RNA sequence: GGGAACGACUCGAGUAGAGUCGAAAAAUGCCGAACGAAGGGAACGCGGGGGAAGGAUCAUAUGACGAGAGGGGAUGAGCUGGUAAAGAGGGGUGGAACGUCGGGUGGAAGCACUCCCAAGAAGAGCAUAGUCUCGCGUUCGCGCGAGACAAAAGAAACAACAACAACAAC
Reactivity to 2A3 in 0.01 (KOAc 150mM, MgCl2 10mM, bicine 150mM(pH8.5), 24C), signal-to-noise 1, nucleotides 027 to 129: a000u130g010c010c010g000a000a000c030g040a030a040g000g020g020a010a000c060g010c030g010g000g000g000g020a030a000g020g000a020u060c000a100u080a060u220g070a020c020g000a000g000a000g000g000g000g000a030u030g000a000g030c030u080g000g030u060a020a020a020g070a000g000g010g010g040u020g040g030a000a090c030g010u000c040g020g000g010u070g010g010a030a000g000c010a000c080u050c000c000c000a000a000g030a020a000g030a000g080c030a090u080a060
Reactivity to DMS in 0.01 (KOAc 150mM, MgCl2 10mM, bicine 150mM(pH8.5), 24C), signal-to-noise 3, nucleotides 027 to 129: a080u130g040c000c000g000a040a150c090g070a110a120g000g000g090a000a010c100g000c080g000g020g000g020g030a000a000g010g000a090u000c100a020u050a080u060g000a100c160g000a100g070a020g010g070g130g010a070u000g000a090g020c080u040g000g070u060a020a020a070g000a060g010g020g000g020u000g040g050a080a030c100g040u000c070g000g030g010u030g090g000a050a000g050c200a110c030u060c030c000c000a130a140g030a040a120g000a030g010c070a140u040a080